This 207-nucleotide RNA was probed chemically with DMS and 2A3. The RNA was probed in 150 mM KOAc, 10 mM MgCl2 and 150 mM bicine (pH 8.5) at 24 C. 2A3 adducts were read by reverse transcription with SuperScript II with manganese.
RNA sequence: GGGAACGACUCGAGUAGAGUCGAAAACGUAUUUGUCGUCCGCCUUCAUCGUGACAGCAUGACCUUUGAGGGUGAUAGCCGCAAGCAUAUUCGACGCCCGGAUCUUAUUUGCGACACUUACCAUGAACUCGAUUUUGAUAUGACCACUGGCGAGCCGAUUCUGGUUGUCAUUCGUGACAACCAGAAUAAAAGAAACAACAACAACAAC
Reactivity to DMS in 0.01 (KOAc 150mM, MgCl2 10mM, bicine 150mM(pH8.5), 24C), signal-to-noise 1, nucleotides 027 to 156: c040g040u000a000u000u000u010g000u000c020g000u020c030c050g000c020c040u000u000c030a080u000c050g000u010g020a150c090a170g030c040a300u010g010a090c110c020u000u010u000g030a090g000g020g050u030g010a090u000a110g060c000c010g010c060a090a090g000c030a110u000a070u000u010c010g010a060c000g020c040c000c010g060g010a020u000c050u000u000a070u000u000u000g010c000g020a090c030a090c070u000u000a080c000c040a110u000g010a050a080c040u000c010g090a130u000u000u000u000g010a070u000a150u010g010a030c020c000a090c100u000g000g020c110g010a120g020c040c040g040
Reactivity to 2A3 in 0.01 (KOAc 150mM, MgCl2 10mM, bicine 150mM(pH8.5), 24C), signal-to-noise 4, nucleotides 027 to 156: c040g030u060a080u030u060u100g080u050c010g030u000c030c020g000c000c000u050u050c020a040u030c010g170u160g090a080c050a040g110c040a110u120g080a130c000c030u010u030u030g060a060g010g000g010u050g030a040u100a060g020c010c020g000c000a040a020g000c010a050u040a100u220u170c040g020a030c030g020c040c030c010g090g020a120u030c010u060u150a100u130u110u120g020c010g020a000c000a020c070u050u100a030c030c030a100u140g030a050a070c010u020c050g030a100u000u040u010u150g070a070u060a060u200g050a040c020c020a050c060u050g030g020c020g020a010g010c000c000g020